[RMDB]
RNA sequence: GGGAACGACUCGAGUAGAGUCGAAAAGAUAUGGAGCUGGUACAGAGCUCCGUGUCGGAAACGACAUAGGAGCGACGAAGUACCUGGCUCCUAAGUCAAAAGGUCUUUGGGUUCGCCCAAAGACCAAUCCAUCAACUUAGUUCGCUAAGUUGAUGGAAAAAGAAACAACAACAACAAC
Reactivity to 2A3 in 0.01 (KOAc 150mM, MgCl2 10mM, bicine 150mM(pH8.5), 24C), signal-to-noise 3, nucleotides 027 to 126: g000a000u020a010u040g000g000a010g000c020u020g020g000u000a000c020a030g060a030g060c000u000c010c010g000u000g000u000c000g000g010a010a000a000c000g030a000c020a020u170a300g010g020a010g000c070g270a250c120g040a010a000g010u000a010c000c000u010g110g000c000u000c000c000u000a000a000g000u000c020a000a000a090a200g000g000u010c010u000u010u010g040g010g030u050u120c300g200c050c000c000a000a000a000g010a000c000c000a000a000
Reactivity to DMS in 0.01 (KOAc 150mM, MgCl2 10mM, bicine 150mM(pH8.5), 24C), signal-to-noise 3, nucleotides 027 to 126: g010a020u000a010u000g000g000a000g020c000u000g010g020u010a020c020a050g000a050g020c000u000c000c000g040u010g000u000c000g010g000a010a000a020c010g010a010c010a010u000a070g050g010a030g010c000g010a150c270g010a070a110g000u000a010c010c010u010g030g020c000u000c000c000u010a000a060g000u010c010a130a070a150a160g010g000u000c000u000u010u000g010g000g030u000u020c300g020c000c000c000a000a000a010g000a000c000c010a020a020